[RMDB]
RNA sequence: GGGAACGACUCGAGUAGAGUCGAAAACGAGUGGAAGGGCCGUCGCUCAACGGAUAAAAGUUACUCUAGGGAUAACAGGCUGAUCUUCCCCAAGAGUUCACAUCGACGGGAAGGUUUGGCACCUCGAUGUCGGCUCUUCGCCACCUGGGGCUGUAGUGACAGAUAAGAUGUUCGCAUCUUAUCUGUCAAAAGAAACAACAACAACAAC
Reactivity to 2A3 in 0.01 (KOAc 150mM, MgCl2 10mM, bicine 150mM(pH8.5), 24C), signal-to-noise 5, nucleotides 027 to 156: c050g010a050g050u080g050g030a000a010g000g010g000c010c000g010u030c040g030c060u070c070a060a030c070g050g020a040u190a140a140a050a040g050u070u050a050c040u040c060u110a060g000g000g080a050u050a170a020c060a090g290g000c000u010g000a010u010c010u000u000c000c010c000c000a030a000g000a000g020u210u230c100a080c040a240u020c020g020a020c010g010g000g010a010a000g030g000u040u100u090g020g000c010a030c020c000u030c020g030a030u110g020u010c010g000g020c010u010c000u010u010c010g000c000c000a010c000c000u020g000g000g010g010c030u070g040u180a080g050u040
Reactivity to DMS in 0.01 (KOAc 150mM, MgCl2 10mM, bicine 150mM(pH8.5), 24C), signal-to-noise 2, nucleotides 027 to 156: c050g010a090g050u000g000g000a100a040g010g010g030c000c000g010u000c030g000c100u000c020a080a170c120g010g030a180u010a050a090a060a100g000u000u010a060c010u010c000u010a150g030g040g000a140u000a050a040c020a130g020g000c020u000g020a080u000c050u000u010c010c000c010c040a040a300g000a040g010u000u000c160a100c160a100u000c000g000a200c200g000g010g000a070a040g050g000u010u000u000g040g020c000a170c000c010u000c070g030a060u000g030u000c050g000g000c020u000c010u010u000c030g000c010c010a060c020c000u000g020g000g060g020c060u020g020u000a150g000u000
About this RNA:
Chemical mapping of a 207-nucleotide RNA with 2A3 and DMS. The 2A3 profile rests on 5,385 reads. DMS adducts were read by reverse transcription with MarathonRT.